This 177-nucleotide RNA was probed chemically with DMS. For DMS, 623 sequencing reads were counted. The reactions ran in a buffer of 150 mM KOAc, 10 mM MgCl2 and 150 mM bicine (pH 8.5), at 24 C.
[RMDB]
RNA sequence: GGGAACGACUCGAGUAGAGUCGAAAAGUCAAGAUGUGUAGGAUAGGUGGGAGGCUUUGAAGUGUGGACGCCAGUCUGCAUGGAGCCGACCUUGAAUUACCACCCUUUAAUGGAAAAACAAAGUGAAGUCUUCCAAGGAGUUCGCUCCUUGGAAGACAAAAGAAACAACAACAACAAC
Reactivity to DMS in 0.01 (KOAc 150mM, MgCl2 10mM, bicine 150mM(pH8.5), 24C), signal-to-noise 1, nucleotides 027 to 126: g000u020c070a160a070g020a090u010g010u000g030u000a040g000g000a060u000a020g060g030u000g050g000g000a230g000g000c020u000u020u000g000a050a110g030u000g020u010g000g010a010c020g020c100c240a220g020u000c000u000g010c000a000u000g010g000a020g010c020c010g000a070c020c020u000u000g010a180a130u020u000a080c000c060a070c050c010c050u000u000u010a100a170u010g000g020a030a050a090a110a050c160a050a030a130g010u000g010a100a150